[RMDB]
RNA sequence: GGGAACGACUCGAGUAGAGUCGAAAAGAUAUGGAGCUGUCUUCAAUGACGCCAUCCCUGAAUCCUGGACCACUCGGAAACGAGUGGUCCAGGUGAGGAUGGUAAGACAGAAGUCAGCUCCUAAGUCCAUUAAUGCUAAGUUCGCUUAGCAUUAAUGAAAAGAAACAACAACAACAAC
Reactivity to DMS in 0.01 (KOAc 150mM, MgCl2 10mM, bicine 150mM(pH8.5), 24C), signal-to-noise 7, nucleotides 027 to 126: g010a070u010a300u010g020g010a020g020c000u010g000u010c000u000u000c010a170a190u010g010a170c300g000c000c000a010u000c010c000c070u000g010a180a080u010c000c000u010g000g010a020c000c000a010c000u010c000g020g000a090a090a160c010g010a020g040u010g010g010u000c000c000a000g000g010u000g010a110g010g010a010u000g010g010u000a040a080g020a220c240a140g010a020a010g000u000c000a010g010c010u000c000c000u000a010a070g000u000c040
Reactivity to 2A3 in 0.01 (KOAc 150mM, MgCl2 10mM, bicine 150mM(pH8.5), 24C), signal-to-noise 3, nucleotides 027 to 126: g030a010u060a050u170g000g000a010g020c000u000g010u010c000u010u000c060a230a300u240g080a060c150g000c010c000a010u010c020c000c000u060g210a210a140u200c000c000u010g020g020a010c000c000a000c000u030c020g050g010a000a060a050c020g000a020g000u000g030g010u010c000c000a000g000g000u000g000a010g000g000a000u000g010g000u020a040a030g100a040c090a050g000a000a000g010u010c010a000g000c000u000c000c000u020a000a010g010u000c000
This 177-nucleotide RNA was probed chemically with DMS and 2A3. For DMS the reverse transcriptase was MarathonRT. The RNA was probed in 150 mM KOAc, 10 mM MgCl2 and 150 mM bicine (pH 8.5) at 24 C. DMS (dimethyl sulfate) methylates the pairing face of unpaired adenines and cytosines. For 2A3 the reverse transcriptase was SuperScript II with manganese. The DMS profile rests on 12,051 reads. For 2A3, 13,716 sequencing reads were counted. It was measured as part of the RMDB library TTRINS.